An RNA of 177 nucleotides, treated with 2A3 and DMS and read out base by base. 2A3 adducts were read by reverse transcription with SuperScript II with manganese. The RNA was probed in 150 mM KOAc, 10 mM MgCl2 and 150 mM bicine (pH 8.5) at 24 C. Values cover nucleotides 27 to 126.

RNA sequence: GGGAACGACUCGAGUAGAGUCGAAAAGGUAGGGCAUUCGUGCCCUACCACACCUCUAAGCAGAUUGGCGAGGACGAGGUCGCGGCCCACGUUUACCAACAACUACUCUCUCCUUCGGGAGAGAGAAACUUUCUCAUCUGUUCGCAGAUGAGAAAGUAAAAGAAACAACAACAACAAC
Reactivity to 2A3 in 0.01 (KOAc 150mM, MgCl2 10mM, bicine 150mM(pH8.5), 24C), signal-to-noise 3, nucleotides 027 to 126: g020g000u000a000g000g000g000c000a000u030u050c220g080u050g000c000c000c000u000a000c010c000a000c000a000c000c000u000c020u070a120a050g000c040a040g040a300u150u210g090g010c040g050a080g020g050a040c030g030a020g020g040u040c030g030c050g080g030c010c010c000a070c030g010u020u080u060a170c030c010a040a070c010a030a030c030u150a070c000u020c000u020c000u000c000c010u040u050c160g040g010g000a000g000a000g000a000g020a010a000
Reactivity to DMS in 0.01 (KOAc 150mM, MgCl2 10mM, bicine 150mM(pH8.5), 24C), signal-to-noise 3, nucleotides 027 to 126: g010g010u010a000g010g000g030c000a030u000u020c210g000u010g000c000c000c000u000a010c000c000a040c160a080c020c000u000c110u010a080a200g000c040a050g030a130u010u010g020g010c030g010a130g020g020a110c090g010a080g020g010u000c060g020c080g010g000c020c000c010a160c060g010u000u000u000a110c030c030a090a060c150a070a040c120u010a200c000u000c000u000c000u000c000c010u000u020c170g040g000g000a010g010a000g000a000g000a030a040